Chemical mapping of a 170-nucleotide RNA with DMS and 2A3. The data come from the RNA Mapping Database (RMDB), library 15KLIB. Values cover nucleotides 27 to 129. 2A3 adducts were read by reverse transcription with SuperScript II with manganese.

[RMDB]
RNA sequence: GGGAACGACUCGAGUAGAGUCGAAAAUCUUCGUUCUUCUUCCUUCUCAACAGUCCGACGAUGUUUCCCAGCCAGGGGUUUUCAUCCUCAAGUUUCUUGAUCUUCUUGUUGGAUCGCCGGAGAUCCUAAACUACCUGGUUCGCCAGGUAGAAAAGAAACAACAACAACAAC
Reactivity to DMS in 0.01 (KOAc 150mM, MgCl2 10mM, bicine 150mM(pH8.5), 24C), signal-to-noise 6, nucleotides 027 to 129: u020c000u000u010c040g000u000u000c020u010u010c010u030u020c050c030u020u040c060u030c060a170a160c230a100g030u000c010c010g010a040c130g000a050u000g010u020u030u010c040c000c000a070g020c120c080a090g000g020g000g030u010u000u000u000c010a110u030c020c040u000c090a040a100g020u020u050u010c020u030u040g000a080u000c020u010u030c000u020u040g030u000u040g010g020a070u030c090g040c000c000g020g030a070g000a000u040c030c050u010a040a060a150
Reactivity to 2A3 in 0.01 (KOAc 150mM, MgCl2 10mM, bicine 150mM(pH8.5), 24C), signal-to-noise 9, nucleotides 027 to 129: u040c020u040u030c030g040u050u040c000u060u020c000u040u080c020c010u100u070c070u010c060a080a200c020a070g060u010c010c010g030a060c020g020a040u060g030u030u050u020c010c000c010a010g040c020c040a020g020g020g000g000u020u050u050u110c060a090u040c000c000u010c010a030a040g020u040u040u000c000u040u050g070a100u030c000u090u010c010u060u100g040u030u030g050g020a040u030c030g020c060c040g050g000a050g030a060u030c010c020u030a010a040a040